[RMDB]
RNA sequence: GGGAACGACUCGAGUAGAGUCGAAAACAUUCAGUCUAAGAAGAUUGAUCUUAGUCAUGUGACCUCCAAGUGUGGAUCAUUGGACAACAUCCGCCACAGGCCAGGCGGUGGUCAUGUCCGCAUUGAACUAAUCAUCCACCUUCGGGUGGAUGAUUAGAAAAGAAACAACAACAACAAC
Reactivity to DMS in 0.01 (KOAc 150mM, MgCl2 10mM, bicine 150mM(pH8.5), 24C), signal-to-noise 3, nucleotides 027 to 126: c040a060u000u020c140a100g020u000c000u000a030a030g000a040a120g000a180u020u010g010a080u020c030u010u000a040g010u000c020a040u000g010u010g000a160c080c050u000c130c080a090a040g010u010g010u000g000g000a030u010c060a050u000u010g020g020a060c050a060a080c070a080u030c020c020g040c000c000a090c070a120g020g010c090c090a100g020g000c000g010g020u000g010g030u000c050a030u000g000u000c000c010g050c080a040u000u000g010a040a150
Reactivity to 2A3 in 0.01 (KOAc 150mM, MgCl2 10mM, bicine 150mM(pH8.5), 24C), signal-to-noise 3, nucleotides 027 to 126: c020a000u110u240c070a000g040u000c010u040a050a030g010a050a030g140a260u140u300g120a140u040c000u000u040a040g020u040c020a050u080g050u030g070a060c000c020u070c050c040a130a040g050u040g010u000g060g000a070u140c030a100u080u160g100g010a000c000a130a050c010a100u040c000c000g000c020c010a110c040a090g180g080c030c000a040g000g000c000g000g010u000g010g000u020c010a020u040g010u010c020c010g000c010a010u000u060g030a060a010